[RMDB]
RNA sequence: GGGAACGACUCGAGUAGAGUCGAAAAUCCUAAGUCAGCAGCGAAUAGAGGAGGACACUAAGACAGAGUCGGAAACGACUCAAUGACGGUGUCUACCCACCCUCUACUAGCUGCUGAUAUGGAAAAAGUAAACAAAAGAUUCGUCUUUUGUUUACAAGGCUAUUGCUUAGUUCGCUAAGCAAUAGCCAAAAGAAACAACAACAACAAC
Reactivity to 2A3 in 0.01 (KOAc 150mM, MgCl2 10mM, bicine 150mM(pH8.5), 24C), signal-to-noise 2, nucleotides 027 to 156: u020c000c000u020a090a000g010u000c000a010g000c000a000g010c010g020a060a020u010a010g000a010g000g000a020g000g020a020c020a000c000u030a080a030g120a030c060a020g190a000g040u000c000g030g040a020a050a030c010g000a000c000u010c070a050a170u100g020a000c040g000g000u000g010u000c000u030a050c020c020c010a090c010c010c000u000c010u000a000c010u020a010g000c000u000g000c010u000g000a000u000a000u010g000g060a060a030a000a030a100g020u040a000a000a000c000a000a000a050a000g000a010u090u170c260g130u000c110u060u030u000u000g000u000u000u000a010c010a000a040
Structure probing data (2A3) for a 207-nucleotide construct. Reactivities are given for positions 27 through 156. The 2A3 profile rests on 1,960 reads.